[RMDB]
RNA sequence: GGGAACGACUCGAGUAGAGUCGAAAAGUAGCAGUGAUAGGGAUAAAAAUGUCAACAUUUAAGCUCAUAGCCUGAAUCUGCUUUUAGGAAUGAUUUUAUGCUAAUAAAAUUUACUUAAUGUUGAUUUAUUUAAUGGCAGUAACCAUGGUAGGUUAAAAAGUGUUACAUAUUUCGAUAUGUAACACUUAAAAGAAACAACAACAACAAC
Reactivity to DMS in 0.01 (KOAc 150mM, MgCl2 10mM, bicine 150mM(pH8.5), 24C), signal-to-noise 4, nucleotides 027 to 156: g030u000a100g010c030a110g040u000g000a150u000a070g010g000g000a140u010a030a080a080a120a090u000g010u000c010a010a010c010a020u010u000u000a010a020g020c030u010c080a090u000a180g020c010c010u000g000a000a050u000c030u000g000c080u000u000u000u000a030g020g000a180a110u010g010a050u000u000u010u010a020u000g000c120u010a090a070u000a020a020a030a050u000u010u000a040c010u000u000a020a030u010g000u000u000g000a010u000u000u000a070u020u000u000a050a090u010g020g000c020a100g010u000a050a080c030c020a040u000g020g030u010a050g000g020u000u010a020a050a080
Reactivity to 2A3 in 0.01 (KOAc 150mM, MgCl2 10mM, bicine 150mM(pH8.5), 24C), signal-to-noise 5, nucleotides 027 to 156: g080u070a010g000c020a000g020u010g060a060u120a050g030g000g010a020u150a080a170a030a030a070u130g010u030c010a000a010c000a030u130u150u140a040a000g000c030u030c130a030u060a020g030c010c010u000g010a020a010u030c030u070g070c070u100u050u020u050a020g010g010a020a020u060g010a030u020u040u080u120a060u080g020c020u070a120a090u080a100a180a070a070u130u210u160a060c010u010u040a020a010u010g000u010u000g000a000u030u050u230a090u050u130u050a140a040u050g020g000c010a020g030u020a050a000c010c000a000u010g080g030u080a080g010g010u030u030a060a040a020
About this RNA
This 207-nucleotide RNA was probed chemically with DMS and 2A3. High DMS reactivity at an A or C suggests that its Watson-Crick edge is free. The RNA was probed in 150 mM KOAc, 10 mM MgCl2 and 150 mM bicine (pH 8.5) at 24 C. For DMS the reverse transcriptase was MarathonRT.